[RMDB]
RNA sequence: GGGAACGACUCGAGUAGAGUCGAAAAUGACGGUGUCGUUUGCUAUAAUAGUGAUUAUGCAGCUAAGGGUUACAUUGCUGGAAUACAGAAUUUUAAGGAAACGCUGUAUUAUCAGAACAAUGUCUUUGUACUGGUAGCUUCGGCUACCAGAAAAGAAACAACAACAACAAC
Reactivity to DMS in 0.01 (KOAc 150mM, MgCl2 10mM, bicine 150mM(pH8.5), 24C), signal-to-noise 5, nucleotides 027 to 129: u040g040a120c130g060g030u030g020u010c020g010u010u010u080g030c020u070a030u020a070a110u050a120g010u000g030a050u010u050a060u000g030c050a080g000c080u030a000a000g010g030g080u020u060a060c020a060u000u000g010c020u030g010g000a040a030u020a030c020a040g020a040a070u000u020u010u050a140a120g040g030a100a060a070c300g050c000u030g030u020a010u000u020a110u020c040a040g000a040a110c050a000a040u060g020u010c070u020u010u030g040u040a090
Reactivity to 2A3 in 0.01 (KOAc 150mM, MgCl2 10mM, bicine 150mM(pH8.5), 24C), signal-to-noise 4, nucleotides 027 to 129: u100g040a000c030g000g000u040g020u010c000g010u000u090u130g110c040u050a060u050a190a070u070a130g040u010g030a070u020u080a000u090g020c000a000g000c000u030a010a010g150g000g000u080u080a000c000a000u000u010g000c000u000g030g010a000a000u000a000c000a010g020a020a060u080u040u040u060a230a080g150g030a110a050a020c120g000c000u010g000u010a010u000u000a120u080c010a000g020a090a010c010a000a000u050g010u020c030u020u000u020g030u060a080
Chemical mapping of a 170-nucleotide RNA with DMS and 2A3. High DMS reactivity at an A or C suggests that its Watson-Crick edge is free. The 2A3 profile rests on 5,646 reads. The data come from the RNA Mapping Database (RMDB), library 15KLIB. The reactions ran in a buffer of 150 mM KOAc, 10 mM MgCl2 and 150 mM bicine (pH 8.5), at 24 C. High 2A3 reactivity points to a flexible backbone, as in loops and unpaired stretches. The DMS profile rests on 10,529 reads.